Background:
Structure probing data (DMS and 2A3) for a 177-nucleotide construct. For DMS, 8,486 sequencing reads were counted. The data come from the RNA Mapping Database (RMDB), library OK2TRN. For 2A3, 7,249 sequencing reads were counted. The reactions ran in a buffer of 150 mM KOAc, 10 mM MgCl2 and 150 mM bicine (pH 8.5), at 24 C.
[RMDB]
RNA sequence: GGGAACGACUCGAGUAGAGUCGAAAAAGGGAAGGGGAGGCAUGGAUCUGGAUCAAGGACCGCACGUUCUCCUUCGAGGGCCUCAUGUCCAGGGCCAUGGGAGUGGGACUUGAGAACGUGACAUGGGUACCACUGUAAGUUUCGACUUACAGUGGUAAAAAGAAACAACAACAACAAC
Reactivity to DMS in 0.01 (KOAc 150mM, MgCl2 10mM, bicine 150mM(pH8.5), 24C), signal-to-noise 6, nucleotides 027 to 126: a080g000g000g000a170a080g010g010g020g000a100g010g010c080a060u010g000g010a080u010c030u010g000g000a110u000c190a110a080g010g000a070c030c050g010c080a110c020g010u000u010c010u000c020c170u000u000c150g010a080g010g000g000c010c010u000c070a060u000g020u000c050c070a060g000g000g020c040c030a050u010g000g000g000a170g000u000g010g010g010a110c110u000u000g010a050g000a050a050c080g000u000g000a090c120a070u010g000g020g000
Reactivity to 2A3 in 0.01 (KOAc 150mM, MgCl2 10mM, bicine 150mM(pH8.5), 24C), signal-to-noise 4, nucleotides 027 to 126: a010g040g030g060a070a070g010g020g000g030a050g060g040c040a030u070g030g010a090u020c010u040g030g010a050u110c050a040a030g030g010a050c020c000g050c040a030c040g000u020u000c020u020c020c030u070u060c060g010a090g020g020g000c030c000u060c060a080u230g060u030c010c050a020g020g030g000c000c020a010u050g040g000g000a160g060u180g000g020g020a020c010u040u070g030a020g000a060a010c030g010u030g020a040c020a120u120g070g010g030